The record gives the reactivity of an RNA of 177 nucleotides to 2A3 and DMS.
Conditions: 150 mM KOAc, 10 mM MgCl2 and 150 mM bicine (pH 8.5), 24 C.
Reactivities are rounded to 0.1 and cut off at 0 and 3.
It was measured as part of the RMDB libraries RFM100 and RFMREP.
RNA sequence: GGGAACGACUCGAGUAGAGUCGAAAAGCCGAUGAUGAGUUGCCCAAUGUUUAGAGGGUGUAGUUGGCUCAAGUUCCUGUUUACCAGGUAGAACCUACUUGCAGCUGCUGCAUUCACGUGAUAUCAAGUUUGGUGGGAAAUUCGUUUCCCACCAAACAAAAGAAACAACAACAACAAC
Reactivity to 2A3 in 0.01 (KOAc 150mM, MgCl2 10mM, bicine 150mM(pH8.5), 24C), signal-to-noise 2, nucleotides 027 to 126: g110c000c000g010a140u150g020a000u040g020a010g220u070u080g080c000c000c000a040a160u100g110u080u030u130a050g010a020g000g000g000u000g000u040a000g000u040u300g000g000c000u000c020a060a000g000u000u010c000c000u020g000u000u170u100a120c070c030a010g000g030u030a090g110a180a120c000c000u030a020c020u000u000g010c000a000g000c000u030g090c000u010g010c000a030u000u050c010a020c070g070u110g100a120u000a040u120c050a230a130
Reactivity to DMS in 0.01 (KOAc 150mM, MgCl2 10mM, bicine 150mM(pH8.5), 24C), signal-to-noise 2, nucleotides 027 to 126: g000c030c000g020a100u010g040a110u040g000a130g000u000u000g000c000c000c000a040a110u000g050u030u000u000a170g000a140g000g040g040u000g000u000a030g050u020u010g020g010c000u000c010a030a030g010u010u050c000c000u000g040u000u000u000a120c300c010a010g000g010u040a140g010a100a120c110c090u050a030c010u000u000g010c120a000g000c000u000g000c000u000g010c010a030u000u000c010a060c060g000u000g030a030u060a170u030c090a090a110